[RMDB]
Conditions: 150 mM KOAc, 10 mM MgCl2 and 150 mM bicine (pH 8.5), 24 C. The record gives the reactivity of an RNA of 177 nucleotides to 2A3 and DMS. Reactivities are given for positions 27 through 126. For DMS the reverse transcriptase was MarathonRT.
RNA sequence: GGGAACGACUCGAGUAGAGUCGAAAACUCGCAUCUGCAAGUUCUCUUAAGCAAAAUACUUGCAUUAGGUCUCAGCUGGGGCUGUGCACCAGGCAGUUCGGAGGAAUAUUCAAUUCUCAGCGGAAGCGGUCGUUAGUUACUUCGGUAACUAACGACCAAAAGAAACAACAACAACAAC
Reactivity to 2A3 in 0.01 (KOAc 150mM, MgCl2 10mM, bicine 150mM(pH8.5), 24C), signal-to-noise 4, nucleotides 027 to 126: c010u020c010g010c010a120u040c010u060g000c020a060a030g020u090u010c070u000c020u060u200a160a080g050c080a050a010a000a060u110a080c030u030u020g020c020a050u010u110a070g030g020u000c000u000c020a050g030c030u050g040g030g080g010c000u020g020u050g030c000a040c030c000a020g070g000c020a040g010u030u090c080g230g020a030g040g100a050a020u120a100u130u120c060a050a060u060u010c050u010c020a030g010c030g020g060a070a020g050c020
Reactivity to DMS in 0.01 (KOAc 150mM, MgCl2 10mM, bicine 150mM(pH8.5), 24C), signal-to-noise 1, nucleotides 027 to 126: c010u000c000g020c110a190u040c020u020g040c000a000a090g000u000u000c160u000c050u040u000a040a090g000c290a070a010a050a030u000a030c030u000u000g030c060a050u010u010a060g000g000u000c000u000c030a030g000c000u000g010g000g000g060c000u000g040u010g000c130a090c160c200a130g000g030c010a000g090u000u000c070g000g020a100g000g000a020a010u000a090u090u040c300a160a100u000u000c000u000c000a220g000c050g070g030a020a080g040c030
2A3 adducts were read by reverse transcription with SuperScript II with manganese.